An RNA of 207 nucleotides, treated with 2A3 and read out base by base.
For 2A3 the reverse transcriptase was SuperScript II with manganese.
RNA sequence: GGGAACGACUCGAGUAGAGUCGAAAACGACAACUUUCAUUGUCUCGCCGAGGCUGCUAAGCGUGGUGUUGGUACGGGUAAAUGUACCUGUCAGCACAUCGCUGACGCGGUCCAUUUCCCCGGCAUCGAGGGCGAACUGUGAAAGAAUAUUUGAGCCCCCCAGUAUGCUUUUCGAAGCAUACUGGGGAAAAGAAACAACAACAACAAC
Reactivity to 2A3 in 0.01 (KOAc 150mM, MgCl2 10mM, bicine 150mM(pH8.5), 24C), signal-to-noise 1, nucleotides 027 to 156: c110g060a030c000a060a010c030u000u000u000c000a020u000u020g000u000c130u010c220g000c000c000g070a180g170g030c040u110g000c160u300a140a070g030c070g040u140g000g000u000g080u060u170g130g040u160a090c030g000g010g010u070a020a030a030u020g000u000a000c000c020u010g000u000c010a010g060c020a050c060a300u300c120g000c000u000g000a000c030g010c110g000g000u000c000c000a000u030u000u000c000c000c000c000g000g080c040a020u030c000g030a120g000g000g140c000g010a010a010c000u000g010u000g000a000a000a000g000a010a090u170a230u040u050u140g120a110g030c000c030